The record gives the reactivity of an RNA of 177 nucleotides to 2A3 and DMS. Conditions: 150 mM KOAc, 10 mM MgCl2 and 150 mM bicine (pH 8.5), 24 C. Reactivities are given for positions 27 through 126. Source: RMDB library TTRDEL, as collected in RNAgym. High DMS reactivity at an A or C suggests that its Watson-Crick edge is free. The 2A3 profile rests on 2,892 reads.
RNA sequence: GGGAACGACUCGAGUAGAGUCGAAAAGAUAUGGAAGCGAACUACAUCUGGCCUACGACGAAGAACUCGGAAACGAGGGAGUCGUAGGGAUGCGCUUCCUAAGUCAAAAGACGCGUUCGCGCGUCAAUCUACAUCAUCCCUUCGGGGAUGAUGUAGAAAAAGAAACAACAACAACAAC
Reactivity to 2A3 in 0.01 (KOAc 150mM, MgCl2 10mM, bicine 150mM(pH8.5), 24C), signal-to-noise 2, nucleotides 027 to 126: g000a010u120a030u150g000g020a000a000g000c020g040a070a090c110u190a060c260a050u020c040u190g300g090c000c000u000a000c000g010a010c020g130a300a140g030a130a060c000u000c010g020g000a070a040a050c000g000a000g000g060g010a010g000u010c000g010u000a010g010g020g000a000u010g000c000g010c000u010u000c000c000u000a050a020g040u010c020a000a000a060a180g010a010c000g000c020g040u070u100c280g000c020g020c000g170u020c010a000a010
Reactivity to DMS in 0.01 (KOAc 150mM, MgCl2 10mM, bicine 150mM(pH8.5), 24C), signal-to-noise 2, nucleotides 027 to 126: g010a020u000a300u010g000g020a000a040g010c020g000a040a050c100u020a300c040a040u000c020u020g020g000c030c000u010a000c000g000a010c000g020a080a110g000a180a180c000u000c000g000g000a150a060a190c000g030a000g000g000g010a090g020u000c000g010u000a000g000g020g010a000u000g000c000g000c000u010u000c000c000u000a000a050g010u000c030a060a080a100a220g000a000c000g010c000g000u000u010c260g000c020g030c000g000u000c010a050a070